Chemical mapping of a 177-nucleotide RNA with DMS and 2A3.
[RMDB]
RNA sequence: GGGAACGACUCGAGUAGAGUCGAAAAGAAAGGCAGCUAGUGCAGCCCACGCAGAGGCAUGCUUUUGCAUGCCCAGUCGAGCCCACGACUAAGGGCAGCUGCGUCACUGAGGGCAGCUGCCGAAAGAGCACGUGAUUAUGUUCGCAUAAUCACGUGCAAAAGAAACAACAACAACAAC
Reactivity to DMS in 0.01 (KOAc 150mM, MgCl2 10mM, bicine 150mM(pH8.5), 24C), signal-to-noise 2, nucleotides 027 to 126: g010a060a130a130g000g000c010a030g030c000u000a140g000u000g000c050a100g020c030c040c030a110c100g000c060a100g010a190g010g020c000a000u010g010c000u000u000u000u010g030c010a010u000g000c000c000c030a020g030u010c010g000a120g030c000c010c020a300c030g000a020c010u000a140a110g000g000g000c010a170g030c000u010g020c020g050u000c140a140c110u000g000a070g010g000g000c010a060g000c000u000g010c000c000g000a000a060a080g000a180
Reactivity to 2A3 in 0.01 (KOAc 150mM, MgCl2 10mM, bicine 150mM(pH8.5), 24C), signal-to-noise 2, nucleotides 027 to 126: g110a010a090a000g040g030c010a000g000c040u120a020g080u110g100c010a000g020c010c000c000a070c020g050c020a010g060a150g070g000c010a020u000g030c000u180u300u220u280g020c000a000u010g000c020c000c000a010g010u030c000g010a020g000c000c020c000a060c020g040a010c000u040a080a060g110g110g000c000a010g010c010u010g010c020g130u100c050a060c100u100g070a150g050g030g000c030a000g000c010u000g000c000c010g000a010a010a010g020a040

For DMS the reverse transcriptase was MarathonRT.